The data come from the RNA Mapping Database (RMDB), library OK3TST. An RNA of 207 nucleotides, treated with 2A3 and read out base by base.

[RMDB]
RNA sequence: GGGAACGACUCGAGUAGAGUCGAAAAUACUACUACAUUAUUAAAUCAUGAAGUCAUAUAUAUUGCUAUUGCUGCUUUCAUGUAUAAUCAUAAUAAACAGCGAUAUAACACCGCAUGAACCAUCCAACGGAAAGUGUAAAGACAACGAAUACAAACGCCACGUAGCCUUAUUCGUAAGGCUACGUGGAAAAGAAACAACAACAACAAC
Reactivity to 2A3 in 0.01 (KOAc 150mM, MgCl2 10mM, bicine 150mM(pH8.5), 24C), signal-to-noise 1, nucleotides 027 to 156: u080a010c010u000a000c020u040a010c040a030u080u130a090u070u130a230a150a180u180c040a050u040g090a090a030g030u040c060a020u040a010u030a020u010a050u300u070g050c020u000a000u040u110g000c000u000g010c020u000u000u140c060a090u000g070u020a070u220a100a030u250c040a030u080a180a070u130a080a210a000c040a010g010c000g020a010u000a000u000a070a010c010a010c080c020g000c060a050u120g010a070a040c050c000a000u070c010c000a000a020c110g050g000a080a060a000g030u000g050u050a050a050a000g080a000c010a090a000c050g020a020a020u120a040c060a020a020a000c040g040